[RMDB]
RNA sequence: GGGAACGACUCGAGUAGAGUCGAAAAGCCUUUGAAUUAGGAGUUCUUAGGGUUAGCGAUUGUUUUUACAUGCUUUAUGUUGGGUUGGGAUGGGUUUUAAAGCAUGGGUUUAACUUAUAAUAGCCAAGGACGAACUAGCGUUCGCGUUAGUUCGUCCAAAAGAAACAACAACAACAAC
Reactivity to 2A3 in 0.01 (KOAc 150mM, MgCl2 10mM, bicine 150mM(pH8.5), 24C), signal-to-noise 2, nucleotides 027 to 126: g020c040c000u040u000u010g120a090a010u060u010a070g000g110a070g130u020u000c000u000u040a030g070g000g100u080u210a080g000c140g130a240u090u170g150u110u030u000u000u010a090c000a000u020g030c010u040u260u000a040u150g160u040u040g030g000g050u170u040g060g010g000a030u110g010g070g020u010u140u110u150a010a010a010g000c000a000u000g010g000g000u060u110u000a030a000c000u010u010a000u000a250a000u020a040g030c000c000a040a100
Reactivity to DMS in 0.01 (KOAc 150mM, MgCl2 10mM, bicine 150mM(pH8.5), 24C), signal-to-noise 1, nucleotides 027 to 126: g000c020c020u040u010u050g010a170a070u020u040a030g030g000a070g000u000u020c030u010u000a150g030g030g040u020u050a060g060c280g000a130u000u030g000u000u000u030u000u000a000c070a000u010g010c010u000u020u000a000u020g000u040u020g000g000g000u030u070g000g000g000a170u000g020g100g010u000u020u010u000a010a030a010g040c100a000u000g000g020g010u000u000u000a040a060c160u030u070a050u000a030a060u070a040g000c030c140a100a080

Notes: Structure probing data (2A3 and DMS) for a 177-nucleotide construct. Source: RMDB library OK1LIB, as collected in RNAgym. The DMS profile rests on 1,533 reads. DMS adducts were read by reverse transcription with MarathonRT. The 2A3 profile rests on 640 reads.